An RNA of 177 nucleotides, treated with 2A3 and read out base by base. For 2A3, 477 sequencing reads were counted. For 2A3 the reverse transcriptase was SuperScript II with manganese. Conditions: 150 mM KOAc, 10 mM MgCl2 and 150 mM bicine (pH 8.5), 24 C. Reactivities are given for positions 27 through 126.

RNA sequence: GGGAACGACUCGAGUAGAGUCGAAAAUAUACAAACAACCAUGUGUUCCACCGGCGUCACUGUAGGCUUCCUUCCAUGCCUACGGUUAGAUGCUUGAAUUUCUUUGGUGGCAUUCUGUCGACACAUGCCGCCGAGAACAGUUCGCUGUUCUCGGCGGAAAAGAAACAACAACAACAAC
Reactivity to 2A3 in 0.01 (KOAc 150mM, MgCl2 10mM, bicine 150mM(pH8.5), 24C), signal-to-noise 1, nucleotides 027 to 126: u040a000u050a000c040a000a180a000c010a020a090c000c000a000u000g000u000g140u010u000c000c000a000c010c000g000g020c020g030u000c000a000c010u000g000u000a000g000g000c040u210u190c010c010u250u000c020c010a050u220g000c000c000u000a000c000g030g030u060u030a080g000a000u000g000c000u000u030g000a000a030u130u240u110c160u200u000u090g000g040u000g000g000c000a070u130u000c040u300g100u140c020g000a000c000a000c000a060u000g030